[RMDB]
Structure probing data (2A3 and DMS) for a 177-nucleotide construct. The reactions ran in a buffer of 150 mM KOAc, 10 mM MgCl2 and 150 mM bicine (pH 8.5), at 24 C. High DMS reactivity at an A or C suggests that its Watson-Crick edge is free.

RNA sequence: GGGAACGACUCGAGUAGAGUCGAAAAGUAAGGUAUCCUAUUCGAUCGAUCGAUCUUCGGACCGUCAGCGCCAGUUUGCCAUUAACCAGAAUGGUUCAGUUACCAUUCAACGUUCGCUGGACCGCGAAGAAGUUCUGGUAUUCGUACCAGAACUUCUAAAAGAAACAACAACAACAAC
Reactivity to 2A3 in 0.01 (KOAc 150mM, MgCl2 10mM, bicine 150mM(pH8.5), 24C), signal-to-noise 2, nucleotides 027 to 126: g150u210a130a020g070g050u050a050u050c000c000u030a070u060u110c050g030a010u020c030g080a090u030c050g010a020u020c000u080u050c010g070g000a050c040c000g020u050c030a010g040c010g000c030c010a000g060u060u050u040g030c080c020a100u060u070a050a010c020c000a020g070a030a010u010g020g000u020u050c030a090g030u070u080a030c000c000a000u060u060c040a070a020c050g030u050u000c010g000c010u030g030g050a070c060c050g010c020g000a000
Reactivity to DMS in 0.01 (KOAc 150mM, MgCl2 10mM, bicine 150mM(pH8.5), 24C), signal-to-noise 2, nucleotides 027 to 126: g000u010a070a090g050g000u020a090u000c010c000u010a110u020u010c120g000a070u010c040g020a070u000c010g010a040u000c010u000u000c070g010g030a120c050c010g030u000c080a070g000c060g000c060c070a030g020u020u000u000g020c060c060a120u000u010a050a120c050c090a210g010a010a020u000g000g000u000u000c110a140g020u020u000a030c020c020a060u000u000c060a040a050c240g020u000u010c120g010c010u010g000g000a120c090c010g020c120g000a100